[RMDB]
RNA sequence: GGGAACGACUCGAGUAGAGUCGAAAACAACGCAGCCUGCACCGGAAGUAGCGAACAAGUGCUUAUCGCACACGAUAUCCCCACGCAGAGCCUCUAUAUCCACCCCAAUAGCCAUGCAGGAUACUACCCUAACGAAGGUAUUCGUACCUUCGUUAGGAAAAGAAACAACAACAACAAC
Reactivity to 2A3 in 0.01 (KOAc 150mM, MgCl2 10mM, bicine 150mM(pH8.5), 24C), signal-to-noise 4, nucleotides 027 to 126: c030a020a020c050g020c070a030g030c010c010u040g010c030a030c000c050g030g000a040a030g030u100a020g050c040g020a060a040c060a210a090g030u020g050c000u130u240a210u210c100g000c010a010c010a000c030g010a010u040a050u170c000c010c000c010a010c020g000c020a010g000a010g100c020c000u030c010u010a080u010a020u080c020c010a050c020c010c000c010a040a120u080a030g000c010c010a020u060g010c010a010g000g020a010u010a040c010u030a030c020
Reactivity to DMS in 0.01 (KOAc 150mM, MgCl2 10mM, bicine 150mM(pH8.5), 24C), signal-to-noise 5, nucleotides 027 to 126: c080a090a090c130g040c070a080g000c030c030u000g000c040a090c080c030g010g000a090a070g020u000a100g020c030g000a070a080c110a080a100g010u000g010c030u010u020a100u010c150g010c040a050c040a090c120g000a070u000a100u000c020c010c010c040a060c070g010c040a070g010a150g000c020c020u000c050u000a070u000a060u000c020c020a130c040c020c010c050a050a090u000a080g000c050c030a070u000g010c050a050g010g010a120u000a050c070u010a100c170